RNA sequence: GGGAACGACUCGAGUAGAGUCGAAAAAAAGACUUGGGUACAAAGUUGCAGGCAUUUCUGGAGCAACGUCUGACACUGUCUGUGUGGAACAGAUUGUUGAGAACAGCGACAUCAUCAUCUUAACGCCUGAAGUAAGCGGAUUCGUCCGCUUACUUCAAAAAGAAACAACAACAACAAC
Reactivity to 2A3 in 0.01 (KOAc 150mM, MgCl2 10mM, bicine 150mM(pH8.5), 24C), signal-to-noise 3, nucleotides 027 to 126: a000a000a010g080a020c040u080u060g080g020g000u100a080c050a040a150a050g040u040u100g060c060a020g120g000c030a040u090u080u000c050u040g030g000a080g050c020a020a040c010g040u000c010u000g030a010c000a020c010u050g100u120c020u020g030u000g020u100g150g060a030a000c000a010g030a060u120u210g080u040u090g070a090g060a080a030c030a000g050c020g050a100c010a020u050c010a010u010c000a010u060c010u100u080a100a070c080g020c000c010
Reactivity to DMS in 0.01 (KOAc 150mM, MgCl2 10mM, bicine 150mM(pH8.5), 24C), signal-to-noise 2, nucleotides 027 to 126: a060a070a030g000a050c070u000u010g000g000g010u000a080c100a030a100a110g010u000u010g000c010a050g010g000c040a080u020u010u010c090u040g020g000a050g010c040a030a040c140g010u010c060u000g030a120c050a020c030u040g010u000c070u020g020u010g040u060g010g010a180a050c000a010g000a000u000u000g020u020u000g020a110g000a030a060c090a060g000c050g010a130c060a000u000c050a060u000c050a070u000c020u000u000a170a100c190g000c040c060